[RMDB]
RNA sequence: GGGAACGACUCGAGUAGAGUCGAAAAUGCAAAAGGACCAAAUGGUGCAACAGUUACAGCAUGUGCAACAGGUACAAACUCAAUCGGAGAAGCAUUUAAAAUUGUGCAACGCGGUGAUGCAGAUGCACCACCAUUCGUUGUUCGCAACGAAUGGUGGAAAAGAAACAACAACAACAAC
Reactivity to 2A3 in 0.01 (KOAc 150mM, MgCl2 10mM, bicine 150mM(pH8.5), 24C), signal-to-noise 3, nucleotides 027 to 126: u120g000c050a020a070a060a060g070g020a000c010c020a140a000a040u200g020g040u010g030c040a080a070c000a070g030u080u120a070c010a050g020c010a050u080g000u010g040c020a100a090c030a100g000g080u080a060c050a040a120a100c030u030c040a050a240u030c050g080g040a020g050a030a000g010c040a010u060u070u190a160a180a050a130u170u120g040u010g030c000a010a020c070g020c030g130g070u020g030a000u070g000c050a020g090a140u060g000c030a010
Reactivity to DMS in 0.01 (KOAc 150mM, MgCl2 10mM, bicine 150mM(pH8.5), 24C), signal-to-noise 2, nucleotides 027 to 126: u030g050c110a100a040a060a060g000g010a140c120c060a100a060a080u030g020g010u000g010c040a110a040c060a100g030u100u000a140c110a070g000c040a170u000g010u030g000c030a070a070c050a010g000g010u030a010c180a080a140a080c120u000c000a130a030u040c140g000g020a020g000a020a170g000c040a000u000u040u000a040a090a060a120u010u010g000u020g000c020a060a150c130g000c260g000g040u010g010a000u010g000c030a080g060a080u000g000c000a100
The record gives the reactivity of an RNA of 177 nucleotides to 2A3 and DMS. The 2A3 profile rests on 2,218 reads. DMS adducts were read by reverse transcription with MarathonRT. 2A3 adducts were read by reverse transcription with SuperScript II with manganese. For DMS, 2,119 sequencing reads were counted. Values cover nucleotides 27 to 126.